[RMDB]
RNA sequence: GGGAACGACUCGAGUAGAGUCGAAAACAUUACAGACACAGGUGAAGGUGGUUAUUAUGGUGGAUAUUACUACAGACGUUUCGAGUUUGGACAAUUUGGUACGGUUUGGCUUUCUUGUUGGAAUAAAGAUGAUUUGGUAAACUACUACCAAUAGACCAUCACUCUUACGAUUCGUCGUAAGAGUGAUAAAAGAAACAACAACAACAAC
Reactivity to 2A3 in 0.01 (KOAc 150mM, MgCl2 10mM, bicine 150mM(pH8.5), 24C), signal-to-noise 6, nucleotides 027 to 156: c030a050u110u180a020c020a030g090a010c020a010c010a090g050g040u070g040a070a020g040g020u030g020g040u050u050a060u100u030a070u110g030g020u010g010g020a020u050a050u130u060a030c020u040a030c040a080g080a070c070g040u020u030u110c070g040a060g030u000u100u050g030g000a020c040a100a110u030u040u050g010g010u030a010c030g010g000u020u020u030g020g000c020u040u090u020c020u030u080g030u030u030g020g050a090a100u090a130a120a040g080a030u130g030a050u030u040u050g010g010u020a050a090a030c070u170a070c010u010a010c030c000a000a000u020a040g050a020c010c010
Reactivity to DMS in 0.01 (KOAc 150mM, MgCl2 10mM, bicine 150mM(pH8.5), 24C), signal-to-noise 4, nucleotides 027 to 156: c030a100u000u000a120c070a110g020a100c040a080c050a120g010g020u010g010a070a100g010g040u000g010g010u000u000a090u000u000a090u000g020g030u000g020g010a120u000a050u000u000a080c040u000a120c050a130g000a060c110g020u010u010u010c070g010a120g020u000u000u000g030g000a080c050a050a110u000u000u000g010g020u000a040c070g020g020u000u010u010g020g020c030u000u000u000c020u000u000g000u000u010g000g010a070a130u000a060a070a140g000a130u000g010a260u000u000u000g000g040u000a020a070a130c140u000a100c090u000a050c010c010a020a050u000a140g010a100c110c080
The record gives the reactivity of an RNA of 207 nucleotides to 2A3 and DMS. For DMS the reverse transcriptase was MarathonRT. The data come from the RNA Mapping Database (RMDB), library OK3TST.